[RMDB]
RNA sequence: GGGAACGACUCGAGUAGAGUCGAAAAAUGCCGCAUUCAGCGACGGUAACUCUAGUGGGCCACUGUCCAUCUAGCGUUGACAUCUACAUACUAUAUAGUAAUACCAAUACUCAAGACUACGAAACGGGAUAAAUGGAUAUUUCGAUAUCCAUUUAUCAAAAGAAACAACAACAACAAC
Reactivity to DMS in 0.01 (KOAc 150mM, MgCl2 10mM, bicine 150mM(pH8.5), 24C), signal-to-noise 9, nucleotides 027 to 126: a070u020g010c010c000g010c050a100u020u020c080a090g000c090g030a080c040g000g000u020a050a050c010u000c010u000a020g010u000g000g000g010c010c300a090c190u020g010u000c030c020a030u040c020u010a020g010c090g000u000u000g000a070c090a070u020c040u000a060c070a090u020a060c100u010a120u020a090u010a050g000u010a050a070u020a100c060c040a050a060u010a050c050u000c070a070a090g000a100c070u020a060c080g000a040a080a070c160g000g010
Reactivity to 2A3 in 0.01 (KOAc 150mM, MgCl2 10mM, bicine 150mM(pH8.5), 24C), signal-to-noise 9, nucleotides 027 to 126: a000u140g020c010c010g020c030a050u110u120c060a050g050c010g120a080c020g060g030u050a040a030c010u000c000u030a020g010u030g020g020g000c040c100a210c210u220g020u000c010c000a070u040c020u020a010g010c010g020u010u050g030a020c010a070u030c030u060a050c030a110u090a070c050u060a060u090a080u080a220g070u070a060a060u040a140c010c030a050a040u030a060c010u020c050a040a060g050a090c050u070a040c120g110a110a090a020c050g090g030
An RNA of 177 nucleotides, treated with DMS and 2A3 and read out base by base.
The reactions ran in a buffer of 150 mM KOAc, 10 mM MgCl2 and 150 mM bicine (pH 8.5), at 24 C.
Source: RMDB library OK1LIB, as collected in RNAgym.
The DMS profile rests on 24,162 reads.